[RMDB]
RNA sequence: GGGAACGACUCGAGUAGAGUCGAAAAACGUUGAUAUGGAUUUACUCCGAGGAGACGAACUACCACGAACAGGGGAACCUCUACCCGUGGCGUCUCCGUUUGACGAGUAAGUCCUACGUCAACAUGCCAACGCCCGCGUUCGCGCGGGCGAAAAGAAACAACAACAACAAC
Reactivity to 2A3 in 0.01 (KOAc 150mM, MgCl2 10mM, bicine 150mM(pH8.5), 24C), signal-to-noise 2, nucleotides 027 to 129: a000c040g000u000u000g000a000u000a000u050g050g000a010u000u000u000a000c000u020c000c000g000a030g000g000a000g000a000c000g000a010a070c070u130a070c110c000a010c000g000a150a020c060a130g000g010g000g040a080a080c070c020u020c030u040a040c040c010c030g020u000g000g000c000g000u000c000u000c010c000g030u010u050u080g010a000c000g000a000g000u010a000a000g010u000c000c000u000a020c000g010u000c000a000a000c000a000u120g030c020c020a050a010